[RMDB]
RNA sequence: GGGAACGACUCGAGUAGAGUCGAAAAUGCCGGCGAACGCAGACGCUGCGGCCAUGAGCAGUUGCGUCGCCUGUGCCGGGUUCAUCGCCGCUUGCUGGAUUAUCGGACUCAGCUGGGCCAACGCCGGGCACCAGCUAAAAUUCGUUUUAGCUGGUGCAAAAGAAACAACAACAACAAC
Reactivity to 2A3 in 0.01 (KOAc 150mM, MgCl2 10mM, bicine 150mM(pH8.5), 24C), signal-to-noise 5, nucleotides 027 to 126: u070g030c000c000g000g010c010g010a110a020c070g000c130a030g020a040c030g000c020u030g000c010g020g040c030c030a260u240g050a040g070c010a000g000u050u030g010c010g010u010c020g010c010c020u030g050u080g010c020c000g020g010g000u030u010c020a050u110c080g020c030c030g050c140u120u210g040c110u190g020g040a130u120u070a080u290c110g020g010a010c010u000c020a000g010c000u010g020g000g000c030c010a150a070c020g010c010c030g000g040
Reactivity to DMS in 0.01 (KOAc 150mM, MgCl2 10mM, bicine 150mM(pH8.5), 24C), signal-to-noise 5, nucleotides 027 to 126: u010g020c010c010g010g010c000g020a150a100c150g010c140a140g010a070c090g010c010u000g010c000g000g040c020c060a110u010g000a160g010c010a030g020u000u000g010c000g020u000c080g010c020c020u010g000u010g020c010c030g010g000g010u000u000c020a090u000c230g010c010c020g010c090u000u000g010c050u010g010g010a100u010u000a090u010c200g010g000a060c020u000c050a050g020c010u000g000g000g010c020c130a070a130c070g000c010c010g000g000
Structure probing data (2A3 and DMS) for a 177-nucleotide construct. High DMS reactivity at an A or C suggests that its Watson-Crick edge is free. 2A3 adducts were read by reverse transcription with SuperScript II with manganese. Conditions: 150 mM KOAc, 10 mM MgCl2 and 150 mM bicine (pH 8.5), 24 C. Values cover nucleotides 27 to 126. 2A3 is a SHAPE reagent: it acylates the 2'-hydroxyl of flexible nucleotides of all four kinds. The 2A3 profile rests on 6,997 reads.